Chemical mapping of a 177-nucleotide RNA with 2A3 and DMS.

RNA sequence: GGGAACGACUCGAGUAGAGUCGAAAAGUCCUAGGCAUCGGCGGUGUAGAAGCAAUGGCGUAGACCUCAGGCACCGAGUAAGUGUAUCGGAGCAAGCAUGACCAGAGUAGAGCCAGAGACAUACGUGCAGUAUAAUAGGGUUCGCCCUAUUAUACUGAAAAGAAACAACAACAACAAC
Reactivity to 2A3 in 0.01 (KOAc 150mM, MgCl2 10mM, bicine 150mM(pH8.5), 24C), signal-to-noise 6, nucleotides 027 to 126: g020u010c000c010u030a070g060g020c010a060u030c050g060g000c030g050g030u050g010u060a060g010a130a010g030c050a040a130u120g020g000c030g020u040a040g050a140c010c010u040c010a010g080g000c010a010c050c020g020a020g070u140a180a090g030u060g070u150a070u060c040g010g000a020g040c050a090a010g010c010a050u100g040a070c010c020a020g020a020g070u090a040g010a020g040c020c010a010g010a000g010a060c030a040u160a040c050g060u070g060
Reactivity to DMS in 0.01 (KOAc 150mM, MgCl2 10mM, bicine 150mM(pH8.5), 24C), signal-to-noise 9, nucleotides 027 to 126: g010u000c000c010u000a080g010g010c040a050u000c070g010g020c040g000g020u000g010u000a070g000a100a100g020c060a080a080u010g010g010c050g020u000a080g000a100c100c010u000c050a090g000g000c030a070c040c030g010a090g010u010a060a080g010u000g020u010a060u010c040g010g010a080g000c060a070a100g000c060a050u010g010a090c090c030a060g000a090g000u000a070g010a090g010c030c030a070g000a080g010a060c080a070u000a060c150g010u010g010

The DMS profile rests on 14,862 reads. For DMS the reverse transcriptase was MarathonRT. The reactions ran in a buffer of 150 mM KOAc, 10 mM MgCl2 and 150 mM bicine (pH 8.5), at 24 C. For 2A3 the reverse transcriptase was SuperScript II with manganese.